An RNA of 170 nucleotides, treated with DMS and read out base by base. DMS (dimethyl sulfate) methylates the pairing face of unpaired adenines and cytosines. The RNA was probed in 150 mM KOAc, 10 mM MgCl2 and 150 mM bicine (pH 8.5) at 24 C.
RNA sequence: GGGAACGACUCGAGUAGAGUCGAAAAAUCAGGAUCCAGUGGAUCCGUGGGAAUUAUCCCGUUCCACCCCCGCGGCACACUCCUUCCCCCCUGCGGGCCCCCCCAUAAGAUGGCAGGAACCCACUCAUAACUUCCUGCUUCGGCAGGAAGAAAAGAAACAACAACAACAAC
Reactivity to DMS in 0.01 (KOAc 150mM, MgCl2 10mM, bicine 150mM(pH8.5), 24C), signal-to-noise 5, nucleotides 027 to 129: a140u050c180a150g010g020a000u040c000c020a140g010u050g070g000a020u000c040c030g080u000g000g000g000a050a020u070u040a150u000c000c040c000g010u030u040c000c000a150c160c150c000c020c040g040c070g000g100c080a150c250a110c090u040c060c050u000u020c040c020c000c040c040c020u050g070c080g010g050g010c000c000c010c010c000c000c030a030u000a000a020g030a060u020g010g050c020a000g030g080a020a040c060c000c000a060c000u010c170a000u050a130a070